[RMDB]
RNA sequence: GGGAACGACUCGAGUAGAGUCGAAAAUCUUUAACCUGACCAACAUCGACCGCUGGUUCCUGGUGCAAAUUGAAGAGCUGGUGCGUCUGGAAGAGAAAGUGGCUGAAGUCGGGAUUACUGGCCUCAACCAGUAGUCGGACUUCGGUCCGACUACUGGAAAAGAAACAACAACAACAAC
Reactivity to 2A3 in 0.01 (KOAc 150mM, MgCl2 10mM, bicine 150mM(pH8.5), 24C), signal-to-noise 2, nucleotides 027 to 126: u080c000u000u070u030a050a060c000c000u030g000a030c000c040a010a110c020a140u060c080g120a110c000c040g020c020u010g020g000u000u010c010c000u030g050g010u070g020c020a080a110a250u070u210g090a120a040g050a030g020c110u120g010g010u090g000c090g000u000c050u090g040g070a070a040g070a010g020a100a090a040g090u040g010g040c000u000g000a010a010g040u000c020g000g110g000a010u010u100a070c020u010g020g000c040c040u060c040a030a010
Reactivity to DMS in 0.01 (KOAc 150mM, MgCl2 10mM, bicine 150mM(pH8.5), 24C), signal-to-noise 1, nucleotides 027 to 126: u000c010u040u010u020a030a040c040c090u040g000a120c090c000a050a150c150a050u000c030g000a110c010c000g020c020u000g060g030u010u050c000c030u000g010g000u000g000c180a010a180a200u030u000g040a150a080g020a020g030c050u000g000g010u000g000c120g000u000c000u010g000g070a050a130g000a200g000a080a020a100g000u020g000g000c030u000g000a000a060g000u000c000g000g000g020a140u040u000a070c000u000g000g040c020c060u030c300a130a280